Chemical mapping of a 177-nucleotide RNA with 2A3 and DMS.
RNA sequence: GGGAACGACUCGAGUAGAGUCGAAAAGAUAUGGAUCACUGGAGCGAGGACGCUCGGAAACGAGCGUCUACCCACCGAACUACUCCUAGUGAUCCUAAGUCAAAAGCGGAGAGUUCGCUCUCCGCAACUGUUCUAGGAUGUUCGCAUCCUAGAACAGAAAAGAAACAACAACAACAAC
Reactivity to 2A3 in 0.01 (KOAc 150mM, MgCl2 10mM, bicine 150mM(pH8.5), 24C), signal-to-noise 1, nucleotides 027 to 126: g000a010u080a000u150g010g010a000u020c000a020c000u020g010g030a030g150c170g050a050g020g000a000c000g020c000u010c000g040g000a020a010a000c000g000a000g000c000g030u020c000u010a000c000c010c010a070c020c120g030a090a080c100u290a060c000u230c020c030u060a000g010u010g010a000u020c000c010u000a000a000g020u000c030a080a110a010a060g000c010g030g000a000g000a000g010u010u180c240g040c150u000c000u010c000c000g000c010a010a010
Reactivity to DMS in 0.01 (KOAc 150mM, MgCl2 10mM, bicine 150mM(pH8.5), 24C), signal-to-noise 2, nucleotides 027 to 126: g000a000u000a130u020g010g000a010u000c010a000c010u000g010g050a030g010c170g020a120g000g010a000c000g020c000u000c000g020g000a050a040a020c030g000a030g010c010g020u000c010u000a040c130c130c110a300c230c070g010a050a070c160u000a300c010u000c020c000u000a020g000u000g010a030u000c010c000u020a000a040g000u010c030a060a040a070a070g010c010g000g000a050g000a020g010u000u020c190g050c010u000c000u010c010c010g020c010a000a020
The reactions ran in a buffer of 150 mM KOAc, 10 mM MgCl2 and 150 mM bicine (pH 8.5), at 24 C.
The DMS profile rests on 1,191 reads.